[RMDB]
The data come from the RNA Mapping Database (RMDB), library OK2TRN. This 177-nucleotide RNA was probed chemically with DMS and 2A3. Reactivities are given for positions 27 through 126. For DMS the reverse transcriptase was MarathonRT. Conditions: 150 mM KOAc, 10 mM MgCl2 and 150 mM bicine (pH 8.5), 24 C. For 2A3, 3,626 sequencing reads were counted.
RNA sequence: GGGAACGACUCGAGUAGAGUCGAAAACUCAUUUUUGAAAGUAGGCAGGGCUCCAAACAACUUCGUUUACCUUGCCGAGGACAAACCUGUCUGUCCUGCAGACACUAUGGGCCUUGUACAGACCCCAAAUGCCAUUAUGAUUCGUCAUAAUGGCAUUAAAAGAAACAACAACAACAAC
Reactivity to DMS in 0.01 (KOAc 150mM, MgCl2 10mM, bicine 150mM(pH8.5), 24C), signal-to-noise 8, nucleotides 027 to 126: c030u030c040a130u010u010u010u000u010g010a120a120a110g010u010a110g010g000c010a020g000g000g020c240u010c210c190a020a020a020c060a110a180c240u010u010c140g000u000u000u000a120c020c010u000u000g000c030c010g000a080g010g010a080c040a020a070a110c270c130u000g020u000c020u000g010u000c100c120u020g010c040a040g000a050c030a050c160u000a100u010g000g000g030c030c010u000u000g010u010a080c160a090g000a110c030c000c020c180a050
Reactivity to 2A3 in 0.01 (KOAc 150mM, MgCl2 10mM, bicine 150mM(pH8.5), 24C), signal-to-noise 4, nucleotides 027 to 126: c010u020c030a120u020u080u090u120u280g190a210a150a040g040u100a040g050g000c010a000g000g000g020c050u100c200c130a020a030a010c030a040a080c100u200u130c070g000u000u050u020a050c000c000u010u050g000c000c010g000a000g000g010a010c040a030a090a050c000c020u050g030u000c000u000g030u050c020c100u100g000c000a000g010a040c010a010c070u110a120u090g010g060g020c010c030u050u040g030u090a100c020a100g090a210c020c020c000c000a050